[RMDB]
RNA sequence: GGGAACGACUCGAGUAGAGUCGAAAAAGCGUGAUAUACGUAUCACGCAAACCCAACCAACCAGUUCAGCAACGCGAACUCCGAACUUAAUCGAAACAUCAAAGGAAGCGCUGGUACGCCAGCGCAAUCCUCCUUUACCGUUCGCGGUAAAGGAGGAAAAAGAAACAACAACAACAAC
Reactivity to 2A3 in 0.01 (KOAc 150mM, MgCl2 10mM, bicine 150mM(pH8.5), 24C), signal-to-noise 5, nucleotides 027 to 126: a000g000c000g000u000g010a000u000a000u030a040c260g090u010a000u000c000a000c000g010c000a010a010a020c030c000c000a020a020c030c010a060a060c000c000a010g020u110u080c010a030g040c040a110a040c040g020c020g050a020a010c010u040c040c000g070a120a120c060u160u170a180a030u170c090g070a060a100a090c070a080u180c130a130a040a100g060g040a090a100g060c000g000c000u010g000g020u030a020c250g060c010c000a000g000c000g000c000a000a010
Reactivity to DMS in 0.01 (KOAc 150mM, MgCl2 10mM, bicine 150mM(pH8.5), 24C), signal-to-noise 2, nucleotides 027 to 126: a000g050c000g010u000g000a040u000a000u020a000c210g000u000a000u000c000a010c080g030c020a000a000a030c000c000c010a250a210c270c110a000a070c070c110a080g070u000u000c030a120g000c160a170a050c090g040c000g000a070a120c060u010c070c010g000a040a170c140u000u130a020a040u000c030g010a000a080a070c060a170u000c070a050a070a030g000g000a030a180g010c000g000c000u000g000g060u010a090c240g000c000c000a000g000c000g000c000a000a000

The data come from the RNA Mapping Database (RMDB), libraries RFM100 and RFMREP.
The record gives the reactivity of an RNA of 177 nucleotides to 2A3 and DMS.
For 2A3 the reverse transcriptase was SuperScript II with manganese.
The RNA was probed in 150 mM KOAc, 10 mM MgCl2 and 150 mM bicine (pH 8.5) at 24 C.